[RMDB]
RNA sequence: GGGAACGACUCGAGUAGAGUCGAAAAAUACUUCUCAGGAUGGCGCGUUGCAGUCUAACAAGAUCCAGGGACUGUACAGAAUUUUCCUAUACCUCGAGUCGGGUUUGGAAUCUAAGGUUGACUCGCUAAAACUUUACGUGGUUCGCCACGUAAAGAACAAUCUUAGAGAGUUCGCUCUCUAAGAUUGAAAAGAAACAACAACAACAAC
Reactivity to DMS in 0.01 (KOAc 150mM, MgCl2 10mM, bicine 150mM(pH8.5), 24C), signal-to-noise 2, nucleotides 027 to 156: a090u000a070c020u000u000c040u000c040a190g040g020a120u020g000g030c120g010c080g000u000u000g000c030a080g040u000c020u000a050a130c070a100a230g000a090u000c020c010a140g000g020g000a050c020u000g000u030a130c100a130g010a120a100u010u000u000u000c020c020u000a140u000a050c090c000u000c030g020a010g020u000c020g000g020g000u000u000u000g040g000a070a040u010c060u000a090a060g020g030u000u010g000a070c050u000c020g020c040u000a080a070a140a110c000u000u000u000a010c000g020u000g010g010u000u000c300g020c000c000a000c000g000u010a000a000a010g000a060a170
Reactivity to 2A3 in 0.01 (KOAc 150mM, MgCl2 10mM, bicine 150mM(pH8.5), 24C), signal-to-noise 4, nucleotides 027 to 156: a000u090a040c020u060u020c030u010c030a010g080g020a100u100g030g030c030g020c030g130u110u040g000c020a010g010u030c020u050a130a080c040a120a080g060a130u060c050c030a020g030g000g010a010c010u020g010u040a020c020a070g150a190a100u040u030u010u050c010c000u030a040u070a110c010c000u000c030g010a020g010u020c020g010g010g000u070u070u050g010g000a040a020u020c030u090a130a070g080g030u110u140g040a020c000u000c010g000c030u050a060a060a040a080c000u020u010u010a000c000g000u010g020g010u040u030c170g020c080c000a000c000g000u000a000a000a000g000a000a000
An RNA of 207 nucleotides, treated with DMS and 2A3 and read out base by base. The RNA was probed in 150 mM KOAc, 10 mM MgCl2 and 150 mM bicine (pH 8.5) at 24 C. The DMS profile rests on 4,576 reads. In probing experiments dimethyl sulfate is read out at A N1 and C N3, which are open when not base-paired.